The data come from the RNA Mapping Database (RMDB), library OK2TRN.
This 177-nucleotide RNA was probed chemically with DMS and 2A3.
The RNA was probed in 150 mM KOAc, 10 mM MgCl2 and 150 mM bicine (pH 8.5) at 24 C.
Reactivities are given for positions 27 through 126.
For 2A3, 14,045 sequencing reads were counted.
[RMDB]
RNA sequence: GGGAACGACUCGAGUAGAGUCGAAAACAGGACAAACUGCGCAGCCUGAAAAACGUCGACAUUAUUCUGAAUGCGCAAACCACGGAAGUGAAAGGCGACGGCAGCAAAGUCGUUGGUCUGGAAUAUCCCCUUAAUGUAGUUUCGACUACAUUAAGGGAAAAGAAACAACAACAACAAC
Reactivity to DMS in 0.01 (KOAc 150mM, MgCl2 10mM, bicine 150mM(pH8.5), 24C), signal-to-noise 8, nucleotides 027 to 126: c070a100g010g020a060c100a070a100a090c110u000g010c140g020c040a110g020c110c020u000g000a030a040a040a090a090c100g010u010c100g010a110c100a070u000u000a100u010u000c030u010g010a080a060u000g010c030g010c050a030a080a120c150c040a070c070g000g020a080a120g010u000g000a110a080a030g000g010c000g000a050c060g000g000c010a040g010c180a060a140a120g020u000c040g010u000u000g030g020u000c020u000g000g000a080a070u000a100u010c080
Reactivity to 2A3 in 0.01 (KOAc 150mM, MgCl2 10mM, bicine 150mM(pH8.5), 24C), signal-to-noise 7, nucleotides 027 to 126: c010a000g020g060a040c050a040a170a040c090u040g010c020g000c010a010g010c000c020u030g080a080a020a000a010a020c070g110u120c040g060a060c060a130u050u120a120u210u100c040u060g110a170a050u060g000c000g000c010a050a040a030c060c020a050c060g040g060a090a070g040u040g060a100a060a040g010g010c000g000a010c000g030g000c010a040g090c030a110a100a030g010u010c010g040u030u020g110g030u020c010u010g000g040a100a020u090a110u140c010